[RMDB]
An RNA of 177 nucleotides, treated with DMS and 2A3 and read out base by base. The data come from the RNA Mapping Database (RMDB), library OK1LIB. The 2A3 profile rests on 1,034 reads.

RNA sequence: GGGAACGACUCGAGUAGAGUCGAAAAGUAGAAAAUGUUCAGGUUCGAUCCAGCUCACUACAUGUGUCUUGAAAAUGUGGGCACCAUUAAGGUGAAAGUUCACUGCGAUCGAGGAGCUGCUGAUCCGCAGGUGCACUGGUUUCGACCAGUGCACCUGAAAAGAAACAACAACAACAAC
Reactivity to DMS in 0.01 (KOAc 150mM, MgCl2 10mM, bicine 150mM(pH8.5), 24C), signal-to-noise 2, nucleotides 027 to 126: g050u000a090g010a170a130a130a020u020g010u020u000c070a110g000g020u000u000c050g000a010u000c000c000a000g020c110u000c000a020c000u000a090c090a070u020g000u010g000u080c030u000u030g000a140a070a030a120u000g000u040g000g030g000c000a010c060c070a150u010u020a060a150g000g050u010g000a010a000a020g010u100u040c120a070c000u000g010c120g060a030u030c010g010a040g000g000a030g000c000u010g010c110u000g030a080u010c020c080g000
Reactivity to 2A3 in 0.01 (KOAc 150mM, MgCl2 10mM, bicine 150mM(pH8.5), 24C), signal-to-noise 2, nucleotides 027 to 126: g080u140a000g100a030a090a020a060u130g090u060u090c020a030g070g120u060u080c010g010a000u040c040c000a000g000c000u000c000a040c020u040a020c020a130u080g040u010g010u000c020u040u230g130a230a120a000a000u250g040u210g080g000g000c000a000c000c000a010u120u070a170a050g000g060u030g040a090a070a010g010u000u110c050a010c020u000g030c060g010a000u000c020g000a060g040g030a010g030c000u040g000c080u050g040a030u000c060c000g010